[RMDB]
RNA sequence: GGGAACGACUCGAGUAGAGUCGAAAAACUAUUUGUUCUAUAGCAAAUAAACCCGAAACACAGCAUAUAUUUGUUAUAUAUGCUUUGUGGGACACAGCUGUUAGGACAUGAGCCAUCAGGGUCCAAACCUACUACUGCUAUUCGUAGCAGUAGUAGGAAAAGAAACAACAACAACAAC
Reactivity to 2A3 in 0.01 (KOAc 150mM, MgCl2 10mM, bicine 150mM(pH8.5), 24C), signal-to-noise 6, nucleotides 027 to 126: a000c050u040a080u040u040u030g010u030u010c080u090a080u160a090g000c010a020a110a060u110a060a110a080c000c000c000g040a050a060a000c010a000c010a000g010c010a000u010a000u010a020u020u130u140g170u300u010a010u020a000u010a000u010g000c000u000u010u010g010u020g020g000g020a010c030a010c010a170g080c010u030g010u100u070a040g000g020a010c020a110u110g020a030g050c020c000a060u050c050a030g070g010g040u020c010c010a040a010a040
Reactivity to DMS in 0.01 (KOAc 150mM, MgCl2 10mM, bicine 150mM(pH8.5), 24C), signal-to-noise 4, nucleotides 027 to 126: a100c190u010a040u030u010u000g010u010u000c100u010a050u010a010g000c000a020a050a060u010a040a100a110c020c000c010g030a130a110a080c000a020c020a020g000c010a000u000a000u000a010u000u020u060g010u010u030a060u000a000u000a000u000g000c000u010u000u000g020u000g000g010g000a120c140a170c230a120g030c030u000g010u010u010a050g000g000a010c040a070u020g010a070g000c040c070a110u000c090a060g000g000g000u020c010c020a050a080a230
This 177-nucleotide RNA was probed chemically with 2A3 and DMS. The DMS profile rests on 6,601 reads.